RNA sequence: GGGAACGACUCGAGUAGAGUCGAAAAACCUCUAAGUUCGCUUAGAGGUAAUGAACGCUGCAAAAAGCAGCGCGCUCAGCGGAGCACGCAAUAGCAACGCAAGAACACCAUUCUUCGGAAUGGUGAAGAUUAUAACAGUGUUCGCACUGUUAUAAUCAAAAGAAACAACAACAACAAC
Reactivity to 2A3 in 0.01 (KOAc 150mM, MgCl2 10mM, bicine 150mM(pH8.5), 24C), signal-to-noise 9, nucleotides 027 to 126: a000c000c000u000c000u010a020a030g010u030u120c170g040c130u000u000a000g000a010g000g000u010a010a030u080g010a090a030c020g000c010u010g000c020a110a110a070a100a230g000c010a010g000c000g000c010g020c010u060c030a040g030c030g070g010a020g020c030a010c080g120c030a060a170u090a170g000c010a020a020c020g000c030a040a030g070a130a020c000a000c000c000a000u000u000c010u030u060c200g120g000a000a000u000g000g000u000g000a010a010
Reactivity to DMS in 0.01 (KOAc 150mM, MgCl2 10mM, bicine 150mM(pH8.5), 24C), signal-to-noise 8, nucleotides 027 to 126: a050c010c000u010c010u000a020a000g010u000u020c230g020c000u000u000a010g010a010g010g010u000a010a030u000g010a110a100c030g010c000u000g020c010a060a090a090a140a140g010c040a040g000c010g010c050g000c030u000c050a120g020c090g010g000a250g020c010a060c110g010c110a100a080u000a080g000c010a030a160c050g010c050a100a070g010a110a190c010a010c000c000a020u000u000c000u000u010c200g030g000a010a000u000g000g000u000g010a020a050